[RMDB]
The record gives the reactivity of an RNA of 207 nucleotides to DMS and 2A3. 2A3 adducts were read by reverse transcription with SuperScript II with manganese. For DMS the reverse transcriptase was MarathonRT. For 2A3, 2,336 sequencing reads were counted. The reactions ran in a buffer of 150 mM KOAc, 10 mM MgCl2 and 150 mM bicine (pH 8.5), at 24 C.
RNA sequence: GGGAACGACUCGAGUAGAGUCGAAAAAGGUGAUUUCUCCUGCACCUUUAUCAAUGGAGGAACUCGACUUUGCUGUGGGUCCCAAAGGGACCUUACGUGCAGACAGUUACCGGCGGUGAAGUGUGAGCAUAGGUUCGUGUCUUCGGACACGAACCAAGAUGACUAAGAUCUUCGGAUCUUAGUCAUCAAAAGAAACAACAACAACAAC
Reactivity to DMS in 0.01 (KOAc 150mM, MgCl2 10mM, bicine 150mM(pH8.5), 24C), signal-to-noise 1, nucleotides 027 to 156: a050g000g010u000g000a300u000u000u010c020u000c020c010u000g020c040a050c070c000u010u010u010a060u000c160a050a300u000g030g000a070g040g030a030a070c050u020c040g010a090c070u000u010u000g050c090u010g050u010g020g010g000u000c000c020c020a110a090a210g010g050g000a010c010c010u000u010a020c050g000u000g030c010a110g000a070c110a100g010u010u000a090c030c040g020g010c280g030g030u010g000a050a060g010u050g020u000g010a090g000c080a090u010a120g050g060u000u000c000g070u010g020u000c010u000u030c300g080g030a060c010a000c020g000a000a010c010c010a000a050
Reactivity to 2A3 in 0.01 (KOAc 150mM, MgCl2 10mM, bicine 150mM(pH8.5), 24C), signal-to-noise 3, nucleotides 027 to 156: a020g060g020u040g010a120u020u090u010c060u060c020c020u130g050c030a030c000c000u060u150u070a060u050c030a030a050u140g030g000a030g020g060a020a030c020u030c090g060a070c050u020u060u060g000c010u020g000u030g010g000g010u010c000c010c030a160a130a080g000g000g010a010c030c000u020u100a010c010g050u030g000c010a010g040a100c040a010g000u040u050a040c010c000g030g010c010g060g000u020g030a040a010g040u090g030u040g130a020g000c060a090u130a180g000g000u000u000c000g000u000g000u000c010u030u070c220g040g000a000c000a000c000g000a000a000c000c000a000a000